[RMDB]
RNA sequence: GGGAACGACUCGAGUAGAGUCGAAAAUAGGGGUCCCCACCGGAUUACCGAAUUCAGUCAAACUCCGAAUGCCAAUGACUUAUCCUCGGGAGUCAGACUGCGAGUGCUAAGAUCCGUAGUCAAGAGGGACCUUAGUAUUUUUCGAAAUACUAAGGUCAAAAGAAACAACAACAACAAC
Reactivity to DMS in 0.01 (KOAc 150mM, MgCl2 10mM, bicine 150mM(pH8.5), 24C), signal-to-noise 7, nucleotides 027 to 126: u000a170g020g010g010g020u000c020c010c030c100a200c110c050g010g020a040u010u010a060c150c110g010a100a060u010u000c060a040g010u000c060a090a100a100c040u010c020c020g010a090a070u010g010c070c050a070a120u010g000a040c040u000u000a100u000c070c050u000c050g000g000g000a050g010u000c050a110g010a040c000u000g000c060g010a060g010u010g020c140u020a110a120g000a040u000c020c020g020u000a040g010u000c060a100a100g010a110g010g010
Reactivity to 2A3 in 0.01 (KOAc 150mM, MgCl2 10mM, bicine 150mM(pH8.5), 24C), signal-to-noise 4, nucleotides 027 to 126: u150a020g010g010g010g030u030c030c020c010c000a030c040c030g040g020a030u050u090a050c020c020g030a040a060u090u070c020a010g050u020c030a060a060a110c040u030c050c040g090a130a060u130g050c030c030a060a140u080g020a040c000u060u060a030u100c000c020u000c020g040g020g010a020g010u000c020a010g010a010c000u010g020c010g040a160g040u090g050c080u130a120a050g050a140u000c010c000g010u010a010g000u020c050a050a040g090a070g070g070